Annotation
The data come from the RNA Mapping Database (RMDB), library TTRDEL. The record gives the reactivity of an RNA of 177 nucleotides to 2A3 and DMS.
RNA sequence: GGGAACGACUCGAGUAGAGUCGAAAAGAUAUGGAAUGCUAAUCCUCGUGGCACCGUUGAAAUCGGAAACGAUGGAGGUGCACGAGGACAACAUUCCUAAGUCAAAAGACGAUGUUCGCAUCGUCAAUCUCAGGACUUGGUUCGCCAAGUCCUGAGAAAAAGAAACAACAACAACAAC
Reactivity to 2A3 in 0.01 (KOAc 150mM, MgCl2 10mM, bicine 150mM(pH8.5), 24C), signal-to-noise 1, nucleotides 027 to 126: g000a040u110a040u220g010g000a030a000u030g010c040u200a260a090u000c000c000u000c020g040u050g230g120c000a000c000c000g090u130u050g030a010a020a010u000c000g010g010a090a000a100c000g000a000u000g000g030a010g000g000u020g090c000a000c000g000a000g000g000a000c010a000a000c000a000u000u000c000c000u000a020a050g060u040c030a060a000a000a230g010a000c000g020a010u020g020u090u170c280g000c170a000u000c000g010u000c010a020a050
Reactivity to DMS in 0.01 (KOAc 150mM, MgCl2 10mM, bicine 150mM(pH8.5), 24C), signal-to-noise 1, nucleotides 027 to 126: g040a010u000a300u010g000g000a000a000u060g000c020u020a290a300u000c000c000u000c010g000u000g010g030c000a000c010c030g000u050u030g000a070a080a010u000c020g000g000a190a080a230c000g000a010u000g000g010a160g010g040u000g010c000a000c040g000a010g000g000a010c050a100a070c000a000u010u000c000c000u000a010a170g000u000c010a050a120a090a120g010a020c020g000a020u000g000u000u000c130g030c000a000u000c020g010u000c000a010a160